[RMDB]
An RNA of 207 nucleotides, treated with DMS and 2A3 and read out base by base. 2A3 adducts were read by reverse transcription with SuperScript II with manganese. For DMS, 2,712 sequencing reads were counted. The data come from the RNA Mapping Database (RMDB), library M2RFPK.

RNA sequence: GGGAACGACUCGAGUAGAGUCGAAAAAAGAAAUCAAAAAAGAUUUCUGAGACAAACACGCUUCACAAUGUGCGGCAAAGAAACAUUGUUUAUGCAAAGGCACUCCGCAAUGUGUGCUCAAACAUUGACUACCGUCCACCGUUCGCGGUGGACGGAAUCAAUGCUCCUUGUUCGCAAGGAGCAUUGAAAAAGAAACAACAACAACAAC
Reactivity to DMS in 0.01 (KOAc 150mM, MgCl2 10mM, bicine 150mM(pH8.5), 24C), signal-to-noise 2, nucleotides 027 to 156: a120a060g000a040a000a000u010c000a020a070a120a220a230a220g000a010u000u010u000c000u000g000a230g060a190c080a140a160a100c070a040c020g000c010u010u000c000a080c010a040a010u010g050u000g020c030g000g000c030a140a030a060g080a010a030a010c000a010u010u000g010u000u000u010a060u000g020c030a030a210a100g000g030c040a050c000u000c080c120g000c250a140a080u000g040u010g000u000g000c000u000c030a070a190a030c000a020u000u020g000a130c050u010a150c030c030g010u000c000c010a030c000c010g000u000u000c270g040c020g040g010u000g030g010a000c010g000g070a010a020
Reactivity to 2A3 in 0.01 (KOAc 150mM, MgCl2 10mM, bicine 150mM(pH8.5), 24C), signal-to-noise 2, nucleotides 027 to 156: a000a000g020a010a010a000u040c060a040a140a220a120a050a030g000a010u010u010u000c010u010g040a050g000a040c060a010a140a000c070a000c070g000c000u010u010c010a000c000a000a000u000g010u000g010c000g020g070c090a160a080a090g080a020a100a000c000a000u000u030g060u000u060u090a060u050g000c030a050a050a090g020g000c010a010c000u050c070c060g060c220a080a050u150g020u000g010u010g040c000u050c040a080a110a040c020a010u040u120g120a060c070u110a100c040c000g010u000c000c000a000c020c000g040u040u040c230g020c020g100g000u010g000g040a000c000g000g000a000a000